Structure probing data (2A3 and DMS) for a 207-nucleotide construct. For 2A3, 4,656 sequencing reads were counted. The data come from the RNA Mapping Database (RMDB), library RNAMAK. Conditions: 150 mM KOAc, 10 mM MgCl2 and 150 mM bicine (pH 8.5), 24 C.
[RMDB]
RNA sequence: GGGAACGACUCGAGUAGAGUCGAAAAGGUGGUUCGCCACCCGUCUUGAUAUGGACUUACUCCCCACCUUGAACACGCAACAGCAGAAUUCGGAAACGAAUUCUGACAUGCGUUCCCAAGAGGUAAGUCCUAAGUCUCGUACUACUUUCGAGUAGAAAUAAAUCAUUUUAUUCGUAAAAUGAUUUAUAAAAGAAACAACAACAACAAC
Reactivity to 2A3 in 0.01 (KOAc 150mM, MgCl2 10mM, bicine 150mM(pH8.5), 24C), signal-to-noise 4, nucleotides 027 to 156: g000g000u010g000g060u080u160c200g070c040c000a020c000c000c020g110u100c100u080u170g040a070u050a090u220g000g000a000c000u010u010a010c020u150c030c020c010c010a030c010c000u010u020g070a110a010c020a010c040g000c000a010a050c020a300g060c000a000g010a000a010u000u000c010g000g020a040a060a050c010g000a000a010u000u000c000u000g020a010c010a040u030g000c000g000u020u020c010c030c000a000a000g070a010g010g010u010a000a000g000u000c000c010u010a060a010g030u010c020u010c150g080u170a070c030u090a020c010u100u120u180c160g060a010g010u080a020g060a040a180
Reactivity to DMS in 0.01 (KOAc 150mM, MgCl2 10mM, bicine 150mM(pH8.5), 24C), signal-to-noise 3, nucleotides 027 to 156: g000g030u000g000g010u000u000c200g010c010c010a010c020c000c010g000u000c050u000u020g020a140u010a200u010g030g020a040c010u000u000a010c000u000c020c000c000c020a170c030c020u000u000g020a100a130c060a110c040g010c020a040a130c120a200g060c000a010g010a060a010u000u010c000g000g020a180a120a300c010g010a020a010u000u000c000u000g000a020c050a140u000g000c000g010u000u000c030c010c000a250a070g010a160g000g030u000a020a030g020u000c000c000u000a040a130g010u000c010u000c040g020u010a160c020u010a010c010u000u000u000c120g010a040g020u000a010g010a120a170